[RMDB]
This 177-nucleotide RNA was probed chemically with 2A3 and DMS. The reactions ran in a buffer of 150 mM KOAc, 10 mM MgCl2 and 150 mM bicine (pH 8.5), at 24 C. For DMS the reverse transcriptase was MarathonRT.
RNA sequence: GGGAACGACUCGAGUAGAGUCGAAAAGGCGAUCGAACGACGGGGCAUACAAGGUCCUCUACACAAUGACCGUAGCGCGAGCUACCAGUAAGAAGUAGAGGAAGCCGAUGUUCCGUCGUACGUUUUGGAGUCUAUUGACAUUCGUGUCAAUAGACUCAAAAGAAACAACAACAACAAC
Reactivity to 2A3 in 0.01 (KOAc 150mM, MgCl2 10mM, bicine 150mM(pH8.5), 24C), signal-to-noise 4, nucleotides 027 to 126: g110g030c060g060a130u080c040g040a160a030c010g000a000c010g010g000g010g000c000a000u040a060c060a170a120g010g020u030c010c000u000c000u010a000c050a000c010a040a100u010g000a000c000c020g000u000a000g000c030g020c050g020a030g000c000u000a000c010c000a000g000u000a000a010g030a100a020g000u000a000g000a000g000g000a000a000g000c010c010g010a000u000g000u000u000c000c000g000u010c000g000u000a000c000g000u010u000u030u150g150
Reactivity to DMS in 0.01 (KOAc 150mM, MgCl2 10mM, bicine 150mM(pH8.5), 24C), signal-to-noise 4, nucleotides 027 to 126: g030g010c090g020a070u000c030g010a130a020c000g010a010c000g000g000g000g010c040a000u000a070c120a190a150g000g010u010c010c000u000c000u000a000c000a020c070a100a230u000g000a110c290c300g010u000a000g000c000g000c300g000a230g010c000u000a010c000c030a020g000u000a010a000g000a110a120g000u000a000g010a000g000g000a020a010g010c000c120g000a020u000g000u000u010c010c000g000u000c010g000u000a010c020g000u010u000u000u000g030